[RMDB]
RNA sequence: GGGAACGACUCGAGUAGAGUCGAAAAACUAACCACUUAGACUUAGAAAGUAUUACUGCUGUCAAUGAUGGUCUUAAAUCAUUUAAAGGUUCUAUCAUCUUUACUUCUUAUGACUUCGAAUUUAUCAGUAGUGUUCGUACUUCGGUACGAACACUACAAAAGAAACAACAACAACAAC
Reactivity to 2A3 in 0.01 (KOAc 150mM, MgCl2 10mM, bicine 150mM(pH8.5), 24C), signal-to-noise 1, nucleotides 027 to 126: a000c100u130a060a010c040c000a060c050u060u080a000g030a030c030u080u000a020g110a090a110a020g010u000a020u120u050a070c040u010g010c000u030g050u100c060a070a090u040g030a040u010g000g040u000c000u050u140a150a100a040u060c010a050u030u120u220a070a120a000g020g070u180u000c050u070a090u060c010a030u000c030u000u090u090a000c030u080u050c030u060u110a080u110g030a060c000u070u010c050g130a190a150u080u090u060a180u160c000a020

This 177-nucleotide RNA was probed chemically with 2A3. For 2A3, 556 sequencing reads were counted. Values cover nucleotides 27 to 126.